[RMDB]
RNA sequence: GGGAACGACUCGAGUAGAGUCGAAAAGCUUGCUCUGCUAUAAGAGGAACCGACUUACUAGAGUUGAAGCUUCUACCGUUGUCUGUGGUGGAAAACGUACGUUUUAUAUCACAGCAAAUGGCGGUAUACGGCAAGGAGUUCGCUCCUUGCAAAAGAAACAACAACAACAAC
Reactivity to DMS in 0.01 (KOAc 150mM, MgCl2 10mM, bicine 150mM(pH8.5), 24C), signal-to-noise 7, nucleotides 027 to 129: g030c120u020u020g000c010u030c000u030g030c200u040a090u070a090a020g030a000g030g020a000a030c160c020g000a000c010u000u000a000c040u000a020g010a080g020u030u030g030a080a080g000c040u050u020c060u020a040c040c030g020u010u000g030u070c000u000g000u000g000g070u000g000g040a040a010a000a010c020g020u100a070c200g000u010u000u000u000a070u000a040u030c000a030c000a020g000c060a060a050a050u080g000g000c000g020g000u000a050u000a070c210g030
Reactivity to 2A3 in 0.01 (KOAc 150mM, MgCl2 10mM, bicine 150mM(pH8.5), 24C), signal-to-noise 9, nucleotides 027 to 129: g010c070u030u100g050c000u010c010u030g100c160u190a070u060a300a040g020a020g020g030a010a010c040c000g010a010c010u000u020a010c020u020a010g000a000g000u020u040g090a100a020g030c000u150u010c000u040a000c000c000g020u010u050g050u040c000u010g000u000g000g010u020g030g030a010a000a000a000c050g160u300a020c060g000u060u010u010u000a030u000a000u010c000a000c000a000g000c020a040a050a100u180g040g000c010g010g000u040a070u030a070c120g080
Chemical mapping of a 170-nucleotide RNA with DMS and 2A3.
The reactions ran in a buffer of 150 mM KOAc, 10 mM MgCl2 and 150 mM bicine (pH 8.5), at 24 C.
As a SHAPE reagent, 2A3 marks flexible, mostly unpaired nucleotides at the ribose 2'-OH.